[RMDB]
Chemical mapping of a 177-nucleotide RNA with DMS and 2A3. DMS adducts were read by reverse transcription with MarathonRT. The RNA was probed in 150 mM KOAc, 10 mM MgCl2 and 150 mM bicine (pH 8.5) at 24 C.

RNA sequence: GGGAACGACUCGAGUAGAGUCGAAAAGACGUUGCCUGCGCCAAUGCCAAUAACCGGGAUCGCCAGUGCUUCGGUAAUACGUUUUGCCAGUUCAACCGGCACGCAUUCCAGCACCAGCAGCUGUGCCUCGGCUGCAUAUUUUCGAAUAUGCAGCCGAAAAAGAAACAACAACAACAAC
Reactivity to DMS in 0.01 (KOAc 150mM, MgCl2 10mM, bicine 150mM(pH8.5), 24C), signal-to-noise 2, nucleotides 027 to 126: g020a100c090g030u010u000g000c060c010u000g000c110g020c030c050a040a110u000g010c070c040a060a120u000a100a090c110c060g010g020g020a050u000c070g030c070c050a130g030u010g000c050u000u000c100g020g000u000a050a040u000a050c050g000u000u000u000u010g000c020c000a100g000u010u000c160a100a110c080c050g030g010c010a040c070g020c040a050u000u000c030c000a070g020c020a050c020c090a160g010c040a060g040c010u010g030u000g020c030c050
Reactivity to 2A3 in 0.01 (KOAc 150mM, MgCl2 10mM, bicine 150mM(pH8.5), 24C), signal-to-noise 1, nucleotides 027 to 126: g030a010c040g050u080u030g020c040c080u050g030c000g020c000c010a050a040u060g010c000c030a080a080u130a050a060c050c060g030g010g030a030u040c040g030c050c020a030g030u000g050c000u010u130c050g000g030u000a000a020u040a030c040g000u000u040u180u270g020c000c000a020g000u130u160c080a090a050c050c000g000g070c030a000c030g020c010a020u090u000c020c020a000g000c010a000c020c000a030g030c010a000g020c010u030g000u040g060c000c010
Values cover nucleotides 27 to 126.